This 207-nucleotide RNA was probed chemically with DMS and 2A3. DMS (dimethyl sulfate) methylates the pairing face of unpaired adenines and cytosines. For DMS the reverse transcriptase was MarathonRT. The RNA was probed in 150 mM KOAc, 10 mM MgCl2 and 150 mM bicine (pH 8.5) at 24 C. For 2A3 the reverse transcriptase was SuperScript II with manganese. The 2A3 profile rests on 7,674 reads.
[RMDB]
RNA sequence: GGGAACGACUCGAGUAGAGUCGAAAACUGCAUCACCUGAUCACUGAUGGCUCAACGGUAUCCGGCGGUACAACUGAUUACUUGUAGCUGCCUUUUGAGCGGGUUGGCUGCAAUCCGAAACGGAGAGAAAACCUAAUUACGUUCGCGUAAUUAGGAAGUAAUCAAGACUGUUCGCAGUCUUGAUUACAAAAGAAACAACAACAACAAC
Reactivity to DMS in 0.01 (KOAc 150mM, MgCl2 10mM, bicine 150mM(pH8.5), 24C), signal-to-noise 2, nucleotides 027 to 156: c080u000g000c030a070u010c020a060c000c010u000g020a080u010c090a070c130u000g020a070u000g000g000c010u000c020a070a080c060g000g010u010a090u010c010c020g050g020c050g050g020u020a060c040a070a080c050u010g000a080u000u000a070c120u000u000g040u000a050g020c020u000g000c000c010u030u000u010u000g010a120g030c040g000g000g010u000u000g070g000c000u000g000c000a020a070u000c030c030g000a070a080a110c040g000g010a100g010a250g020a160a070a090a120c000c000u010a010a000u000u000a000c010g010u000u000c300g020c030g040u000a000a010u000u000a000g040g020a010a050
Reactivity to 2A3 in 0.01 (KOAc 150mM, MgCl2 10mM, bicine 150mM(pH8.5), 24C), signal-to-noise 7, nucleotides 027 to 156: c020u030g000c000a030u020c010a020c000c010u040g040a040u040c030a010c050u040g010a040u050g050g040c060u040c090a070a080c060g090g010u070a060u050c040c010g030g010c040g070g000u080a060c050a080a040c130u090g050a100u110u120a050c040u030u050g000u010a010g030c010u010g010c010c000u030u050u060u120g080a060g020c070g000g020g000u190u200g030g000c000u010g000c010a020a020u020c010c000g040a130a110a120c070g030g020a030g010a000g030a030a070a020a030c000c000u000a000a000u000u000a000c010g010u030u050c230g000c010g110u000a000a000u000u000a000g020g010a010a000